[RMDB]
RNA sequence: GGGAACGACUCGAGUAGAGUCGAAAAUGUGUGAGAAUACUUUUAGGUACAAGGCGAGGUACACGCAGGUAUAGGUGCCACUUGUGUGAGUAUACUUUUAGUAGAGAAGAGAUACACCAGGUAACUGUGACUCAUAAUCGUUCGCGAUUAUGAGUCAAAAAGAAACAACAACAACAAC
Reactivity to 2A3 in 0.01 (KOAc 150mM, MgCl2 10mM, bicine 150mM(pH8.5), 24C), signal-to-noise 4, nucleotides 027 to 126: u130g100u010g010u040g020a080g050a120a050u100a130c000u050u110u110u140a110g000g090u050a080c030a100a020g070g030c060g040a070g010g030u030a020c040a000c020g020c040a050g000g070u090a060u090a110g060g020u050g000c010c010a000c040u020u030g000u000g020u020g120a060g070u040a040u030a080c050u070u050u000u120a070g040u120a020g020a000g040a180a010g030a030g000a000u020a080c040a010c050c000a020g020g000u010a060a040c070u140g010
Reactivity to DMS in 0.01 (KOAc 150mM, MgCl2 10mM, bicine 150mM(pH8.5), 24C), signal-to-noise 3, nucleotides 027 to 126: u020g050u010g000u010g000a100g000a110a080u020a030c020u000u000u000u010a070g010g020u020a030c100a100a060g010g020c080g010a050g010g000u000a060c040a070c000g030c030a020g000g010u010a060u020a080g000g020u000g010c030c060a080c020u000u000g010u040g000u020g020a110g000u020a050u010a060c030u000u010u020u020a090g010u020a040g010a080g010a060a050g000a070g000a080u030a060c040a130c070c030a030g000g000u000a040a030c100u030g010